[RMDB]
RNA sequence: GGGAACGACUCGAGUAGAGUCGAAAAGAUAUGGACUAAGCUCGAUAAGUCCACAUUCGGAAACGAAUGGGACUUUUGACGAGCGAUGUCCUAAGUCAAAAUCCAAUACGCUUCGGCGUAUUGGAAACUUUUAUCCCAGGUUCGCCUGGGAUAAAAGAAAAGAAACAACAACAACAAC
Reactivity to DMS in 0.01 (KOAc 150mM, MgCl2 10mM, bicine 150mM(pH8.5), 24C), signal-to-noise 3, nucleotides 027 to 126: g010a000u000a300u010g010g010a000c010u010a300a300g000c010u000c000g030a120u010a030a010g010u000c000c000a110c010a000u000u010c000g000g000a050a050a070c010g010a020a010u000g020g010g020a010c000u000u000u000u010g010a150c080g000a010g000c000g000a120u020g000u000c010c000u000a000a130g000u000c010a070a060a090a180u010c000c000a000a010u000a000c000g020c010u000u010c200g020g010c000g010u010a000u000u000g000g000a000a010a060
Reactivity to 2A3 in 0.01 (KOAc 150mM, MgCl2 10mM, bicine 150mM(pH8.5), 24C), signal-to-noise 2, nucleotides 027 to 126: g010a000u050a050u080g000g000a000c000u060a090a060g000c000u000c030g070a150u070a300a010g000u000c010c000a240c020a040u000u010c000g000g070a020a040a060c010g000a000a010u020g000g000g000a000c000u120u080u190u300g260a150c030g010a010g040c040g000a000u040g010u010c020c000u000a030a020g020u000c020a010a010a010a280u000c000c010a010a000u000a000c010g000c010u030u070c300g230g000c000g000u000a010u000u010g000g000a000a000a030
Structure probing data (DMS and 2A3) for a 177-nucleotide construct.